[RMDB]
RNA sequence: GGGAACGACUCGAGUAGAGUCGAAAAAGUAACAACGAUAACCUCCCCCGGUGAUUCGAUGGAGCGCCGCAAGGCGAGCCGAUGAAUUGCCGAGAAGCCUGGCUCGAAAUCGUCGACGCAUCGACGACCAUCCUUCGCCGUUCGCGGCGAAGGAUGGAAAAGAAACAACAACAACAAC
Reactivity to 2A3 in 0.01 (KOAc 150mM, MgCl2 10mM, bicine 150mM(pH8.5), 24C), signal-to-noise 1, nucleotides 027 to 126: a010g130u140a050a030c030a020a010c060g050a120u160a040a040c000c020u010c000c000c000c000c000g000g000u010g010a030u000u000c000g040a010u190g000g000a020g020c000g000c000c000g000c140a060a060g010g000c020g000a020g020c000c010g010a050u130g000a010a000u000u000g010c010c000g000a010g000a010a010g000c010c010u070g010g070c030u080c170g030a070a100a120u030c010g000u000c000g010a020c050g000c220a140u020c000g010a000c000g000a000

Source: RMDB library RFM100, as collected in RNAgym. The record gives the reactivity of an RNA of 177 nucleotides to 2A3. Values cover nucleotides 27 to 126. The reactions ran in a buffer of 150 mM KOAc, 10 mM MgCl2 and 150 mM bicine (pH 8.5), at 24 C. Reactivities are rounded to 0.1 and cut off at 0 and 3.